RNA sequence: GGGAACGACUCGAGUAGAGUCGAAAAUUGUACACUUAUAGCAUUGGAGAAGCCUCAAGCCCCAUUGCCUAUCUGGUUUUUGUCACUACACUCACUAGUGAUUAUACGAUUACAGUCUUUGUUACUGCUUUACCAUCCCGUUCGCGGGAUGGUAAAGAAAAGAAACAACAACAACAAC
Reactivity to DMS in 0.01 (KOAc 150mM, MgCl2 10mM, bicine 150mM(pH8.5), 24C), signal-to-noise 1, nucleotides 027 to 126: u010u020g030u010a080c170a050c040u010u010a050u010a070g040c010a030u020u000g010g010a130g050a100a130g040c030c050u000c220a120a280g000c070c010c000c030a050u000u000g000c060c020u000a000u010c030u000g010g000u010u000u000u010u010g020u010c030a010c060u000a010c100a050c100u000c170a050c080u000a010g000u000g030a010u010u010a040u000a050c040g000a080u000u000a110c090a020g000u000c030u000u030u000g030u000u010a040c040u000g000
Reactivity to 2A3 in 0.01 (KOAc 150mM, MgCl2 10mM, bicine 150mM(pH8.5), 24C), signal-to-noise 1, nucleotides 027 to 126: u030u040g030u030a060c060a050c040u050u060a010u010a030g000c070a000u010u040g000g000a190g050a280a080g040c040c050u100c050a050a030g000c000c070c000c030a030u000u020g010c000c000u070a090u110c020u090g160g000u000u040u000u110u150g000u000c040a000c040u000a010c030a020c060u050c020a060c080u040a000g000u050g000a000u070u070a060u000a040c060g010a040u120u000a040c030a010g060u070c060u040u050u080g040u030u060a040c000u010g050
This 177-nucleotide RNA was probed chemically with DMS and 2A3. DMS adducts were read by reverse transcription with MarathonRT. The reactions ran in a buffer of 150 mM KOAc, 10 mM MgCl2 and 150 mM bicine (pH 8.5), at 24 C. The data come from the RNA Mapping Database (RMDB), library 15KREP.